[RMDB]
RNA sequence: GGGAACGACUCGAGUAGAGUCGAAAAUUGGCGCGAUAAGUUGGGUGAUGCGGCACUCAAGAUGGAAGAGCGUCGCCAAGAGUUGCUCAAGGCCUCAGAAGAUCUCUUUGCACAAGUGCACGCUCAAAGAUCUAGAACAGUUCGCUGUUCUAGAUCUAAAAGAAACAACAACAACAAC
Reactivity to DMS in 0.01 (KOAc 150mM, MgCl2 10mM, bicine 150mM(pH8.5), 24C), signal-to-noise 3, nucleotides 027 to 126: u000u010g010g010c010g030c040g000a070u000a070a080g010u010u010g000g000g040u000g000a100u000g010c050g000g000c020a030c020u020c050a080a080g020a140u000g000g010a070a100g010a070g010c100g010u000c050g010c040c060a050a120g000a070g010u010u000g040c040u000c080a110a160g000g020c040c040u000c060a100g000a120a140g000a060u010c030u000c020u000u000u000g000c050a040c100a060a090g000u000g010c040a070c070g000c030u000c050a070a130
Reactivity to 2A3 in 0.01 (KOAc 150mM, MgCl2 10mM, bicine 150mM(pH8.5), 24C), signal-to-noise 2, nucleotides 027 to 126: u040u040g010g020c010g020c020g030a020u040a180a090g070u060u060g040g000g030u020g000a060u100g030c030g030g000c020a010c010u020c080a070a080g160a160u140g020g080a070a060g010a020g040c040g020u050c050g020c010c000a020a000g030a000g070u100u160g030c030u040c050a050a100g060g010c000c020u040c040a100g030a230a040g010a110u020c010u000c000u030u040u120g060c050a040c010a110a030g010u030g050c040a040c130g010c000u000c010a040a100
Chemical mapping of a 177-nucleotide RNA with DMS and 2A3.
DMS adducts were read by reverse transcription with MarathonRT.
For 2A3, 2,652 sequencing reads were counted.
The reactions ran in a buffer of 150 mM KOAc, 10 mM MgCl2 and 150 mM bicine (pH 8.5), at 24 C.